This 177-nucleotide RNA was probed chemically with 2A3.

RNA sequence: GGGAACGACUCGAGUAGAGUCGAAAAGCUGGGGUCAACUUAAGGAGAGCAGGCUCCACCAAUCGUUGUUCAGGAGAUCUUUUGCAUGGACACUCAUGUCAUACUCUUCAUCUGAAUGUAUUGACUAGACUGUCACUUGUUUCGACAAGUGACAGUCAAAAGAAACAACAACAACAAC
Reactivity to 2A3 in 0.01 (KOAc 150mM, MgCl2 10mM, bicine 150mM(pH8.5), 24C), signal-to-noise 3, nucleotides 027 to 126: g000c070u030g000g000g000g040u010c000a040a090c090u100u230a210a030g040g020a060g020a000g000c130a070g000g010c020u000c020c000a020c010c030a030a070u110c140g100u050u030g010u080u030c050a050g020g000a080g010a120u010c040u050u080u050u030g020c020a030u070g010g020a040c020a010c090u130c040a090u050g040u000c000a000u020a010c030u030c030u000u000c110a200u050c050u140g010a060a040u100g030u150a090u050u100g010a020c000u000a000

The data come from the RNA Mapping Database (RMDB), library OK1LIB.